[RMDB]
RNA sequence: GGGAACGACUCGAGUAGAGUCGAAAAAGCAUCUACGGAUGCAGGUGUCACAUGCAUUACUGAGAGAUGUCAUCACACGCUACCUCAUUCUGUGAUGUCAUCACUCAGUACCGCACAUGUCCACCAACUGUGGGUUUCAGUUCGCUGAAACCCACAGAAAAGAAACAACAACAACAAC
Reactivity to DMS in 0.01 (KOAc 150mM, MgCl2 10mM, bicine 150mM(pH8.5), 24C), signal-to-noise 2, nucleotides 027 to 126: a020g050c020a020u020c000u000a160c230g020g000a020u020g060c010a030g000g010u000g000u000c210a000c060a070u000g000c030a030u000u000a000c000u060g040a030g050a110g000a000u000g000u060c000a040u000c000a000c000a000c280g000c150u000a100c160c110u000c250a140u020u000c180u020g000u000g000a000u000g000u000c000a000u000c000a080c000u020c000a000g020u000a000c140c170g030c200a160c060a060u000g030u020c150c000a010c000c000a060a110
Reactivity to 2A3 in 0.01 (KOAc 150mM, MgCl2 10mM, bicine 150mM(pH8.5), 24C), signal-to-noise 4, nucleotides 027 to 126: a000g010c010a010u000c000u020a030c250g110g000a000u010g000c040a050g030g000u010g010u020c070a030c000a030u010g020c010a040u040u050a000c000u010g000a000g000a000g000a000u000g000u000c000a000u000c000a000c010a030c130g090c080u160a160c040c050u220c040a210u250u080c060u050g000u000g000a010u000g000u000c000a000u000c000a010c000u000c000a000g000u010a000c000c020g080c020a060c000a060u040g010u040c040c010a020c010c000a030a070
Record summary: Source: RMDB library RFM100, as collected in RNAgym. Structure probing data (DMS and 2A3) for a 177-nucleotide construct. The reactions ran in a buffer of 150 mM KOAc, 10 mM MgCl2 and 150 mM bicine (pH 8.5), at 24 C. For 2A3, 2,988 sequencing reads were counted.